An RNA of 177 nucleotides, treated with DMS and 2A3 and read out base by base. Source: RMDB library OK1LIB, as collected in RNAgym. The 2A3 profile rests on 11,514 reads. The reactions ran in a buffer of 150 mM KOAc, 10 mM MgCl2 and 150 mM bicine (pH 8.5), at 24 C. Values are in units of 0.01, from 0 to 300, in steps of 10. The DMS profile rests on 5,136 reads. Values cover nucleotides 27 to 126.
RNA sequence: GGGAACGACUCGAGUAGAGUCGAAAAGACUGCGUGCACUCGAGACGAUAUCGAGCCGGAAAUUAAUCGAUAAUGUCUCCAGUAGUGGAUACGAUCCGGCAAGUAUCGACUACAUGUGCUCGUAGGAACGGUAUACUGGUUUCGACCAGUAUACCGUAAAAGAAACAACAACAACAAC
Reactivity to DMS in 0.01 (KOAc 150mM, MgCl2 10mM, bicine 150mM(pH8.5), 24C), signal-to-noise 2, nucleotides 027 to 126: g010a140c000u000g010c010g030u000g000c020a010c000u040c200g000a040g030a040c000g000a060u000a010u010c010g000a210g020c000c000g000g000a050a180a120u040u050a080a090u030c050g020a090u030a040a070u030g020u020c040u000c020c100a070g010u040a020g010u020g000g000a010u000a030c010g010a090u000c010c000g030g010c000a130a100g010u000a000u000c000g010a030c000u000a040c030a100u030g000u010g000c000u000c000g050u000a020g000g000a130
Reactivity to 2A3 in 0.01 (KOAc 150mM, MgCl2 10mM, bicine 150mM(pH8.5), 24C), signal-to-noise 8, nucleotides 027 to 126: g070a010c000u010g000c010g010u010g000c000a000c010u050c050g020a000g010a010c010g010a010u010a000u060c010g000a000g000c010c000g040g080a080a130a060u270u180a120a150u180c030g020a030u040a090a080u170g020u010c010u010c020c020a030g020u070a040g060u120g070g000a010u000a010c000g010a020u010c000c000g000g000c000a000a010g000u000a000u020c050g070a010c010u060a050c000a050u060g000u000g000c000u000c020g000u010a000g000g030a020